[RMDB]
RNA sequence: GGGAACGACUCGAGUAGAGUCGAAAAACUUGUAUAGGCGAUUAAUAAAUCUUCUGUAAAUGCUGUAAGAGGAUUACCCCUUGAGGUUUCAGCACUAGGCAGCUCUAGCGAUUAAUCAAUGCAUUUGUAACGGAAAGACAGUUCGCUGUCUUUCCAAGGAGUAUAUACUGUUCGCAGUAUAUACUCCAAAAGAAACAACAACAACAAC
Reactivity to 2A3 in 0.01 (KOAc 150mM, MgCl2 10mM, bicine 150mM(pH8.5), 24C), signal-to-noise 3, nucleotides 027 to 156: a000c050u130u070g040u040a170u090a090g120g000c020g040a030u060u070a080a060u130a070a120a020u020c020u040u000c000u020g100u100a040a100a110u080g030c030u010g030u060a070a010g010a010g060g010a020u010u130a100c000c020c020c010u040u100g050a130g140g020u020u060u090c020a010g010c000a010c020u050a020g080g000c040a040g010c060u010c020u090a010g050c000g040a060u060u130a060a020u100c100a010a060u090g050c020a040u040u040u180g100u060a060a020c030g000g000a000a000a000g000a000c000a000g020u040u070c130g070c100u000g000u010c000u000u000u000c000c000a000a000
Reactivity to DMS in 0.01 (KOAc 150mM, MgCl2 10mM, bicine 150mM(pH8.5), 24C), signal-to-noise 1, nucleotides 027 to 156: a090c040u000u010g020u010a160u000a150g090g010c010g000a050u030u010a020a130u000a100a100a050u000c000u000u010c000u000g000u000a100a110a070u000g000c050u000g000u010a140a070g010a030g000g000a090u000u010a150c030c000c000c000u010u020g010a120g030g000u000u000u020c060a040g050c030a040c000u000a030g040g040c040a110g000c170u000c030u000a060g020c070g040a110u010u000a010a050u000c040a080a130u000g010c010a170u000u010u000g040u000a080a110c040g010g010a010a010a030g050a020c030a050g040u010u000c300g030c000u000g000u000c000u000u000u010c010c010a000a180

Structure probing data (2A3 and DMS) for a 207-nucleotide construct. For DMS the reverse transcriptase was MarathonRT. In probing experiments dimethyl sulfate is read out at A N1 and C N3, which are open when not base-paired. It was measured as part of the RMDB library M2RFPK.